[RMDB]
RNA sequence: GGGAACGACUCGAGUAGAGUCGAAAAUGAUCAAGAAGUAGGCUUAGGCCAAUUGCUUGGUGGUGAAAGUAGAGGGAAGGUAGCACUUCGACGCCUCUAAGUACGCUGUGGGAGUAGUGCUUAAAUCAAAAGCACAGCGACUUCGGUCGCUGUGCAACUAGCGAACUUUGUUCGCAAAGUUCGCUAGAAAAGAAACAACAACAACAAC
Reactivity to 2A3 in 0.01 (KOAc 150mM, MgCl2 10mM, bicine 150mM(pH8.5), 24C), signal-to-noise 3, nucleotides 027 to 156: u090g000a010u050c030a010a040g050a060a020g080u120a050g070g000c040u120u100a080g120g000c040c020a040a080u060u070g020c020u000u030g010g020u030g030g000u060g040a140a060a040g050u070a020g030a030g020g020g000a050a010g030g010u040a010g000c030a020c070u020u030c050g070a070c040g060c010c010u010c020u020a040a050g030u020a020c030g000c090u040g010u080g060g030g010a030g030u050a010g010u030g010c000u040u090a050a100a040u150c080a100a080a020a000g020c000a000c000a010g000c010g000a000c010u000u070c200g070g000u000c000g000c020u010g000u000g000c000a000a000
Reactivity to DMS in 0.01 (KOAc 150mM, MgCl2 10mM, bicine 150mM(pH8.5), 24C), signal-to-noise 2, nucleotides 027 to 156: u000g020a110u010c040a140a090g010a080a100g000u010a120g000g030c020u000u000a120g030g100c010c020a040a090u000u000g000c030u000u020g030g020u010g010g030u020g020a060a090a140g000u010a050g010a080g010g000g000a070a110g020g010u000a130g000c050a080c040u000u010c020g040a080c050g030c010c000u030c060u000a060a070g010u010a030c040g030c050u000g040u000g010g010g010a100g000u000a080g010u000g000c030u000u000a100a050a110u000c060a040a050a090a170g000c000a020c010a000g020c000g030a020c010u000u010c260g080g010u000c010g040c000u000g030u000g000c000a000a030
The record gives the reactivity of an RNA of 207 nucleotides to 2A3 and DMS. The RNA was probed in 150 mM KOAc, 10 mM MgCl2 and 150 mM bicine (pH 8.5) at 24 C. 2A3 adducts were read by reverse transcription with SuperScript II with manganese. The DMS profile rests on 2,879 reads.